[RMDB]
RNA sequence: GGGAACGACUCGAGUAGAGUCGAAAAUCACAGGCCAAAUCACACAGGACCUUGUGGACAUUGUGAGGGAUGAGAAGGGAAACCCCUGGGAGACUGUGAGCAGAGGAGUAACGUGAUCUGGCUUCAGUUUCAACAGUCACUUGGGCUCAUUUGUGGGGAUUAUUAGGCCGUUCGCGGCCUAAUAAUCAAAAGAAACAACAACAACAAC
Reactivity to 2A3 in 0.01 (KOAc 150mM, MgCl2 10mM, bicine 150mM(pH8.5), 24C), signal-to-noise 2, nucleotides 027 to 156: u080c020a030c020a020g050g000c050c040a070a090a040u210c080a040c010a010c050a110g050g010a200c050c060u090u130g000u070g040g020a040c030a130u120u160g030u030g040a030g040g010g000a000u070g030a050g070a190a050g010g000g020a020a070a060c000c000c000c000u010g000g050g000a080g020a030c010u010g050u040g040a010g000c000a020g020a010g060g000a010g080u120a080a050c050g030u090g050a050u040c000u050g070g000c000u040u070c020a020g020u020u040u050c040a080a070c000a000g070u070c020a000c040u030u040g010g060g000c010u020c030a070u140u140u130g050u130g000g030g000